[RMDB]
RNA sequence: GGGAACGACUCGAGUAGAGUCGAAAAGUCAGUGUUUGGAAUGCUACUGACAUCCAGAAAUCCAAUGGAUUUGUUCUUUGGUCUUGUGGGGUUGACAAGAGAAAUGUCAGUGGGGUGAUGGACACAGAUGAUGAAUGUUUUUCGAAACAUUCAUCAUAAAAGAAACAACAACAACAAC
Reactivity to DMS in 0.01 (KOAc 150mM, MgCl2 10mM, bicine 150mM(pH8.5), 24C), signal-to-noise 9, nucleotides 027 to 126: g010u010c050a070g020u000g010u000u000u000g020g010a230a060u000g000c020u000a030c010u000g000a020c010a050u000c070c120a130g010a040a030a040u000c020c030a120a140u010g020g010a030u000u010u010g010u000u000c030u000u000u000g010g010u000c020u000u000g010u000g010g010g000g010u000u010g000a030c030a040a040g010a080g010a050a070a050u000g000u000c010a020g010u000g000g000g000g020u000g000a280u010g000g000a040c050a030c070a100g010
Reactivity to 2A3 in 0.01 (KOAc 150mM, MgCl2 10mM, bicine 150mM(pH8.5), 24C), signal-to-noise 9, nucleotides 027 to 126: g060u040c070a010g000u010g020u040u050u050g040g100a060a020u090g110c010u020a020c000u010g010a000c000a000u000c020c010a040g110a030a040a010u030c020c030a080a220u180g000g020a030u050u020u110g090u110u030c030u070u040u060g040g000u010c020u050u060g040u070g030g110g030g000u090u150g020a010c010a030a010g020a000g030a060a090a020u040g000u010c010a010g010u010g010g020g010g000u030g020a030u050g010g010a010c010a000c010a030g130
Description: Conditions: 150 mM KOAc, 10 mM MgCl2 and 150 mM bicine (pH 8.5), 24 C. This 177-nucleotide RNA was probed chemically with DMS and 2A3. For 2A3 the reverse transcriptase was SuperScript II with manganese. Reactivities are given for positions 27 through 126.